[RMDB]
RNA sequence: GGGAACGACUCGAGUAGAGUCGAAAAGCUCAUUACUUCGGUAAUGAGCAAAUAAAUUCAGCGGUAAAAGCUCCGCAAAUAUUACCGGUGAUGCGGAGCUUAAAACAGCUAGGUUCGCCUAGCUGAAGCUUCCUUAUAGAUUCGUCUAUAAGGAAGCAAAAGAAACAACAACAACAAC
Reactivity to 2A3 in 0.01 (KOAc 150mM, MgCl2 10mM, bicine 150mM(pH8.5), 24C), signal-to-noise 4, nucleotides 027 to 126: g000c000u000c000a000u000u010a000c000u020u060c180g060g000u010a010a010u010g000a000g000c000a000a000a020u030a000a060a020u120u070c040a020g060c020g120g010u090a200a250a020a000g010c000u000c010c000g000c020a020a030a000u160a040u080u090a040c030c030g050g000u050g020a020u030g000c000g020g000a000g010c000u010u010a000a000a000a000c000a000g000c000u010a000g000g040u030u030c170g040c040c000u010a000g000c000u000g010a020a000
Reactivity to DMS in 0.01 (KOAc 150mM, MgCl2 10mM, bicine 150mM(pH8.5), 24C), signal-to-noise 4, nucleotides 027 to 126: g010c000u000c000a010u000u000a000c000u000u020c170g020g010u000a000a000u000g010a010g010c000a000a030a040u000a030a080a130u010u010c050a070g020c070g010g000u000a100a110a060a030g000c000u000c000c000g010c000a010a030a090u010a130u000u010a130c060c040g000g000u000g000a200u000g000c000g000g000a010g010c000u000u000a010a050a090a180c010a010g000c000u000a000g010g020u000u020c210g000c000c000u010a000g000c000u000g000a040a060